This 177-nucleotide RNA was probed chemically with 2A3.
RNA sequence: GGGAACGACUCGAGUAGAGUCGAAAAACUCGAUACGUCGAGAGGGCACCUCGAUAACCGGCUCGUGGCUCGUACAGACGAUUGUUUGGCUCUGUAACUUGCCAGGGACGGCUGACGAUGUGUUUAAUUCGGUGAAGGUCUUCGGACCUUCACCGAAAAAAGAAACAACAACAACAAC
Reactivity to 2A3 in 0.01 (KOAc 150mM, MgCl2 10mM, bicine 150mM(pH8.5), 24C), signal-to-noise 1, nucleotides 027 to 126: a000c000u000c000g000a010u020a100c120g040u000c030g000a000g000a050g030g000g020c000a000c000c040u000c000g000a020u070a290a000c000c000g010g000c000u020c010g290u080g000g010c000u020c000g000u000a000c000a030g000a000c020g030a180u100u270g200u300u180u260g170g010c100u000c000u020g070u010a060a060c000u090u000g010c000c010a000g040g000g030a020c000g000g000c010u010g000a000c000g070a020u070g050u000g000u000u000u050a190a160

The 2A3 profile rests on 486 reads.
The reactions ran in a buffer of 150 mM KOAc, 10 mM MgCl2 and 150 mM bicine (pH 8.5), at 24 C.
For 2A3 the reverse transcriptase was SuperScript II with manganese.